[RMDB]
Chemical mapping of a 177-nucleotide RNA with 2A3 and DMS. Reactivities are given for positions 27 through 126. 2A3 adducts were read by reverse transcription with SuperScript II with manganese. The reactions ran in a buffer of 150 mM KOAc, 10 mM MgCl2 and 150 mM bicine (pH 8.5), at 24 C.
RNA sequence: GGGAACGACUCGAGUAGAGUCGAAAAGAUAUGGAUCCAGGGAGCUCUGUCUCGGAAACGAGACUGAGCAUCGAUCUGGCGUCCUAAGUCAAAUCAAGAGCGAGUGCUUCGGCACUCGCUCUUGAAACUAAUACCGUACGUUCGCGUACGGUAUUAGAAAAGAAACAACAACAACAAC
Reactivity to 2A3 in 0.01 (KOAc 150mM, MgCl2 10mM, bicine 150mM(pH8.5), 24C), signal-to-noise 1, nucleotides 027 to 126: g030a020u090a030u090g010g000a010u000c010c000a000g000g040g000a020g010c000u000c050u020g020u000c010u010c000g030g000a050a050a030c020g000a000g010a010c010u010g010a020g010c020a050u090c010g010a050u050c000u000g000g040c050g030u020c000c010u010a090a030g040u080c030a050a010a200u050c010a000a000g010a000g040c000g030a000g040u020g010c050u090u160c300g080g000c010a000c030u000c000g010c020u010c000u000u000g000a000a000a000
Reactivity to DMS in 0.01 (KOAc 150mM, MgCl2 10mM, bicine 150mM(pH8.5), 24C), signal-to-noise 4, nucleotides 027 to 126: g000a040u000a300u000g000g010a020u000c010c010a010g010g000g010a030g020c000u000c000u000g000u000c000u000c010g000g010a070a070a170c000g010a010g000a010c000u000g000a000g020c000a100u010c190g010a040u010c000u000g000g000c300g020u000c000c000u010a050a160g010u010c030a110a100a170u000c010a000a010g010a010g010c000g000a020g020u000g000c000u000u020c190g020g010c000a010c000u000c000g000c000u000c000u000u000g000a020a040a150
As a SHAPE reagent, 2A3 marks flexible, mostly unpaired nucleotides at the ribose 2'-OH.